[RMDB]
RNA sequence: GGGAACGACUCGAGUAGAGUCGAAAAGACUCAUGGGAAGUCGGCGUGACUCCCGACUAACGUGGAUGUCCGCUUUCUGGCUCCAGGCAAAGAGUGUUGGUGCGGAGGUUGGUUAGUGGCGCGCCAACAUAGUCGGGUUAUUCGUAACCCGACUAUGAAAAGAAACAACAACAACAAC
Reactivity to 2A3 in 0.01 (KOAc 150mM, MgCl2 10mM, bicine 150mM(pH8.5), 24C), signal-to-noise 6, nucleotides 027 to 126: g030a000c000u010c010a070u080g020g030g020a100a020g020u020c010g010g010c020g040u120g030a040c010u000c000c000c000g030a050c050u100a110a030c020g070u170g040g040a070u180g040u030c000c010g000c000u040u090u030c050u040g030g000c000u000c010c010a030g040g030c030a040a080a020g020a020g020u030g010u020u020g010g000u030g000c010g000g020a080g040g070u100u080g050g010u040u040a050g000u030g030g020c000g000c000g000c000c000a010a000
Reactivity to DMS in 0.01 (KOAc 150mM, MgCl2 10mM, bicine 150mM(pH8.5), 24C), signal-to-noise 9, nucleotides 027 to 126: g000a060c020u000c020a120u020g010g010g010a120a040g010u000c030g000g000c040g000u020g000a050c040u010c040c010c010g000a160c170u030a080a100c070g020u040g010g010a040u030g000u010c010c020g000c050u000u020u020c060u010g010g000c030u010c010c030a080g000g020c140a070a090a100g000a080g010u010g010u000u000g000g010u000g010c010g000g000a100g000g000u000u010g010g010u010u020a070g010u020g000g010c020g010c010g010c000c000a020a050